[RMDB]
RNA sequence: GGGAACGACUCGAGUAGAGUCGAAAAGAUAUGGAAGGUCGUGACGAGUGUUCGGAAACGAACAUACUCGGUUGACCGACUUCCUAAGUCAAGGGUGAUAGAUUCCCUUCGGGGAAUCUAUCACCAACUGUGUCUUCUUGUUCGCAAGAAGACACAGAAAAGAAACAACAACAACAAC
Reactivity to 2A3 in 0.01 (KOAc 150mM, MgCl2 10mM, bicine 150mM(pH8.5), 24C), signal-to-noise 1, nucleotides 027 to 126: g010a000u060a000u100g020g030a030a010g290g300u100c010g000u040g010a020c000g000a010g020u030g000u000u000c000g010g010a060a020a020c000g000a010a010c020a000u160a150c030u000c010g020g040u120u050g030a000c020c000g020a000c000u010u030c000c000u040a100a020g030u050c070a040a180g240g000g000u000g020a010u000a010g020a010u010u000c020c000c000u030u030c300g020g000g000g000a000a000u000c000u000a000u000c000a000c000c000a000a000
Reactivity to DMS in 0.01 (KOAc 150mM, MgCl2 10mM, bicine 150mM(pH8.5), 24C), signal-to-noise 3, nucleotides 027 to 126: g000a040u000a270u010g010g000a020a050g010g010u010c000g000u000g000a020c000g020a030g020u000g010u000u000c010g010g010a030a060a150c000g000a020a010c000a090u010a030c010u000c000g020g010u000u010g000a230c300c000g000a040c000u000u000c000c000u000a050a140g000u000c040a090a050g000g000g030u000g010a030u000a010g010a030u000u010c000c000c000u000u010c180g000g000g000g000a000a010u000c000u000a000u000c000a000c000c010a000a010

Source: RMDB library TTRDEL, as collected in RNAgym. Chemical mapping of a 177-nucleotide RNA with 2A3 and DMS. For DMS the reverse transcriptase was MarathonRT. For 2A3, 2,738 sequencing reads were counted. For DMS, 2,738 sequencing reads were counted. For 2A3 the reverse transcriptase was SuperScript II with manganese.